An RNA of 177 nucleotides, treated with 2A3 and DMS and read out base by base.
The reactions ran in a buffer of 150 mM KOAc, 10 mM MgCl2 and 150 mM bicine (pH 8.5), at 24 C.
2A3 adducts were read by reverse transcription with SuperScript II with manganese.

RNA sequence: GGGAACGACUCGAGUAGAGUCGAAAAACAUAUUCCAACAGUACAAUGUACCAUAUGUUACAAAGUUUUCAAUGAAAUGGUUUUUAGCGAUGCCAAGAGCGAAAGCGUGGAUGAUUAACACACGUACCUACAUUCUGACUUUCGAGUCAGAAUGUAGAAAAGAAACAACAACAACAAC
Reactivity to 2A3 in 0.01 (KOAc 150mM, MgCl2 10mM, bicine 150mM(pH8.5), 24C), signal-to-noise 9, nucleotides 027 to 126: a000c070a050u140a080u100u050c050c030a060a050c030a090g020u070a040c050a100a300u210g020u060a020c010c020a070u050a050u210g040u040u010a060c050a040a160a070g040u040u040u050u160c110a130a110u130g120a150a050a080u060g030g030u050u020u030u070u130a070g020c090g030a040u140g020c020c040a100a020g060a030g090c020g050a080a060a010g010c010g030u030g010g030a080u080g040a120u160u220a140a020c070a000c020a000c060g030u060a040c000
Reactivity to DMS in 0.01 (KOAc 150mM, MgCl2 10mM, bicine 150mM(pH8.5), 24C), signal-to-noise 5, nucleotides 027 to 126: a030c110a070u020a040u000u010c080c080a090a100c130a130g040u030a030c090a100a140u010g000u000a030c060c100a110u030a070u010g000u000u010a040c120a080a070a170g010u010u000u000u000c060a040a100u010g000a050a050a070u020g000g030u000u020u040u010u030a140g000c110g000a050u020g000c050c030a020a060g000a120g020c150g000a020a020a080g000c000g000u020g000g000a080u010g020a080u020u000a090a100c170a060c040a030c050g000u000a100c140